Background:
The record gives the reactivity of an RNA of 177 nucleotides to DMS and 2A3. Conditions: 150 mM KOAc, 10 mM MgCl2 and 150 mM bicine (pH 8.5), 24 C. The data come from the RNA Mapping Database (RMDB), library M2PK50.
RNA sequence: GGGAACGACUCGAGUAGAGUCGAAAAACAUUAAGUUUCGACUUAAUGUAAACCCGAUGAAGCGGCACAUACGGAGCUUCAUACAUCUUAGAGUGCAAAUAAAAAGUUGAUCCUUCGGGAUCAACAACAUGCAUAUAUUCUUCGGAAUAUAUGCAUGAAAAGAAACAACAACAACAAC
Reactivity to DMS in 0.01 (KOAc 150mM, MgCl2 10mM, bicine 150mM(pH8.5), 24C), signal-to-noise 6, nucleotides 027 to 126: a030c000a000u000u010a000a010g010u000u000u010c180g010a030c000u000u000a000a000u000g000u000a020a090a100c000c000c000g010a030u000g000a020a010g010c010g020g010c030a030c050a100u010a090c100g010g010a190g000c010u010u000c010a020u000a080c140a060u010c100u010u000a110g030a100g020u000g010c030a140a080a090u010a050a080a080a130a090g010u000u000g010a010u000c000c000u010u010c230g030g010g000a000u000c000a000a000c000a060a140
Reactivity to 2A3 in 0.01 (KOAc 150mM, MgCl2 10mM, bicine 150mM(pH8.5), 24C), signal-to-noise 9, nucleotides 027 to 126: a000c000a010u010u000a010a010g000u020u040u170c180g070a010c010u000u000a000a000u010g000u010a070a030a020c020c000c010g010a030u030g000a000a000g010c030g100g020c070a030c020a110u270a090c150g200g020a030g010c010u000u010c010a000u040a030c040a090u070c050u140u190a090g040a040g130u060g050c050a030a050a120u200a060a150a030a030a020g000u000u010g000a000u000c010c010u020u050c230g100g000g000a000u000c000a000a000c000a010a000